[RMDB]
RNA sequence: GGGAACGACUCGAGUAGAGUCGAAAAAAGAUAUGGAGCGAAGCUUAUAAGGAUUGUACUAACUAUCAGGCUCGGAAACGAGCCUGACGAAUUAGUACUUGAUUUAAGACUUCGCUCCUAAGUCAAACUUAAAAGGAGUGUUCGCACUCCUUUUAAGAAAAGAAACAACAACAACAAC
Reactivity to DMS in 0.01 (KOAc 150mM, MgCl2 10mM, bicine 150mM(pH8.5), 24C), signal-to-noise 3, nucleotides 027 to 126: a150a110g000a040u000a300u020g000g000a020g020c000g010a010a010g010c020u000u010a060u000a070a090g010g020a200u000u000g000u000a000c010u010a000a030c090u000a270u000c000a010g000g000c000u000c010g020g000a070a060a140c000g000a000g010c000c000u000g000a000c020g000a030a050u000u000a010g010u000a020c000u000u000g000a300u010u010u000a010a090g010a100c010u000u000c000g000c010u000c000c000u000a000a040g010u000c030a110a130a140
This 177-nucleotide RNA was probed chemically with DMS. The RNA was probed in 150 mM KOAc, 10 mM MgCl2 and 150 mM bicine (pH 8.5) at 24 C. For DMS, 2,753 sequencing reads were counted.